[RMDB]
RNA sequence: GGGAACGACUCGAGUAGAGUCGAAAAGAUAUGGAAUUUCGACCCUACAACAGCGGUUGUUCGGAAACGAACGGACCGACAUGUAGCGAAAUUCCUAAGUCAAAAUCACCGUGUUCGCACGGUGAAACCUGUUUAGGCUGUUCGCAGCCUAAACAGGAAAAGAAACAACAACAACAAC
Reactivity to DMS in 0.01 (KOAc 150mM, MgCl2 10mM, bicine 150mM(pH8.5), 24C), signal-to-noise 1, nucleotides 027 to 126: g000a040u000a120u020g000g000a030a000u000u000u000c000g010a300c300c300c020u000a010c000a130a080c220a170g000c000g000g000u000u000g030u000u010c000g040g010a030a060a060c020g010a020a020c020g070g010a000c000c000g010a020c020a280u010g010u000a000g010c080g000a000a000a030u000u000c000c000u000a010a040g010u000c040a070a110a080a100u000c000a010c000c000g000u000g020u000u010c300g020c000a010c010g040g040u010g000a000a110a120
Reactivity to 2A3 in 0.01 (KOAc 150mM, MgCl2 10mM, bicine 150mM(pH8.5), 24C), signal-to-noise 2, nucleotides 027 to 126: g000a020u010a000u050g010g010a030a040u020u020u020c080g100a300c200c080c050u000a010c100a300a010c080a160g090c010g000g000u030u010g000u030u000c000g030g000a000a000a000c000g010a000a010c050g120g000a030c010c020g020a030c150a270u300g000u000a000g080c000g010a000a000a040u000u040c000c000u010a020a010g000u000c020a100a000a010a300u020c020a000c030c050g000u000g030u040u120c300g090c090a000c000g010g000u000g030a010a000a000